[RMDB]
RNA sequence: GGGAACGACUCGAGUAGAGUCGAAAAACAGGGACUCGAGGGGUCCGAUGUGGGCAGGGUGAUCUCGGUACACAGGGACUGGUACCUCGUCGGAACCACAGAGGGUGAGGUGACGGCUCAGGUUGCAACACCGCAUAUUAUUCGUAAUAUGCGGUGUAAAAGAAACAACAACAACAAC
Reactivity to 2A3 in 0.01 (KOAc 150mM, MgCl2 10mM, bicine 150mM(pH8.5), 24C), signal-to-noise 3, nucleotides 027 to 126: a000c030a030g060g010g020a010c020u030c070g050a100g020g050g020g010u010c030c000g020a060u060g020u060g030g010g060c050a040g070g020g030u070g120a150u020c020u000c050g000g050u120a040c150a010c040a100g050g010g020a020c000u050g050g020u130a180c000c000u020c010g020u000c010g000g030a040a050c040c010a030c050a040g080a050g030g000g030u060g020a040g040g010u040g000a020c010g000g010c020u010c030a030g060g000u040u090g010c000a030
Reactivity to DMS in 0.01 (KOAc 150mM, MgCl2 10mM, bicine 150mM(pH8.5), 24C), signal-to-noise 6, nucleotides 027 to 126: a080c090a090g000g010g010a080c040u000c060g010a120g020g010g000g020u000c010c020g010a040u000g010u010g000g000g020c070a090g010g010g000u010g010a080u000c030u000c060g020g010u000a060c120a100c100a110g000g010g010a070c050u000g010g000u010a090c030c000u000c080g010u010c050g010g000a070a070c040c020a070c120a100g000a120g000g000g010u000g010a080g000g020u000g000a080c080g000g000c040u010c040a060g000g010u000u000g000c130a130
The data come from the RNA Mapping Database (RMDB), library OK2TST.
The record gives the reactivity of an RNA of 177 nucleotides to 2A3 and DMS.
DMS adducts were read by reverse transcription with MarathonRT.
The reactions ran in a buffer of 150 mM KOAc, 10 mM MgCl2 and 150 mM bicine (pH 8.5), at 24 C.